[RMDB]
RNA sequence: GGGAACGACUCGAGUAGAGUCGAAAAGCAGGGACGUUCGUCGAAGACGACGGCGAGUGGGUCCACCUCCAGUCUGGGGCUGACGACGGAACGACAUCUGACUCCCAGUUCGUUCGCGGAGGGCCGGCGGUGAUAUUUUAUUCGUAAAAUAUCACCGAAAAGAAACAACAACAACAAC
Reactivity to 2A3 in 0.01 (KOAc 150mM, MgCl2 10mM, bicine 150mM(pH8.5), 24C), signal-to-noise 6, nucleotides 027 to 126: g110c070a050g000g000g040a020c010g030u070u040c000g000u050c010g060a140a060g150a110c130g010a020c010g000g020c000g020a020g020u070g040g120g040u010c030c000a030c020c010u020c010c010a030g070u030c030u060g100g000g060g000c040u040g030a050c030g010a010c020g050g050a060a020c010g050a020c030a140u060c040u070g070a150c030u040c030c020c010a000g020u040u050c030g020u030u060c100g000c030g160g020a030g000g010g020c020c000g040g020
Reactivity to DMS in 0.01 (KOAc 150mM, MgCl2 10mM, bicine 150mM(pH8.5), 24C), signal-to-noise 9, nucleotides 027 to 126: g010c080a080g010g010g010a120c030g000u000u000c010g020u000c010g010a180a170g010a120c130g010a080c050g010g010c030g000a080g010u010g010g020g010u010c050c050a170c060c020u000c020c030a150g010u010c040u000g000g010g000g000c050u000g010a120c060g010a130c050g010g010a030a040c030g010a070c200a100u000c050u010g000a150c100u000c020c040c010a110g000u010u000c040g010u000u000c050g010c080g000g000a110g010g010g010c040c040g010g010